[RMDB]
This 177-nucleotide RNA was probed chemically with 2A3 and DMS. For DMS, 2,062 sequencing reads were counted. For 2A3, 3,099 sequencing reads were counted. Values are in units of 0.01, from 0 to 300, in steps of 10.
RNA sequence: GGGAACGACUCGAGUAGAGUCGAAAAGAAAUCGUGGAUCCUGGUCAGUGUACAGUCCUUCAGAUGGAUACUCUGGACAAACGGGAUCAGCAACUCAUUACAACGGUUCUCGUGCGUCGACUGUACCCGUAGCCCUAUGGUUCGCCAUAGGGCUACGAAAAGAAACAACAACAACAAC
Reactivity to 2A3 in 0.01 (KOAc 150mM, MgCl2 10mM, bicine 150mM(pH8.5), 24C), signal-to-noise 3, nucleotides 027 to 126: g020a010a060a020u160c100g050u060g080g040a090u040c000c000u030g060g050u090c050a030g000u000g000u100a030c010a000g010u020c050c000u030u120c030a030g010a100u100g060g000a020u080a150c030u020c010u030g040g010a020c000a010a080a020c030g030g000g000a010u030c020a010g020c020a040a100c020u050c120a120u100u220a040c070a150a010c060g060g000u030u000c010u020c000g020u010g020c010g010u030c010g000a000c000u010g010u040a020c010c000
Reactivity to DMS in 0.01 (KOAc 150mM, MgCl2 10mM, bicine 150mM(pH8.5), 24C), signal-to-noise 3, nucleotides 027 to 126: g010a080a110a080u000c090g020u010g020g000a080u010c010c010u010g030g020u010c120a100g000u020g000u000a010c060a060g000u000c000c150u000u010c060a030g000a060u030g040g030a170u000a040c260u000c010u000g000g010a010c070a050a300a080c010g000g010g000a010u000c000a070g030c100a040a060c230u000c120a110u010u000a130c210a140a140c110g000g000u010u000c000u000c000g010u010g020c300g000u010c020g000a020c010u000g000u000a010c000c060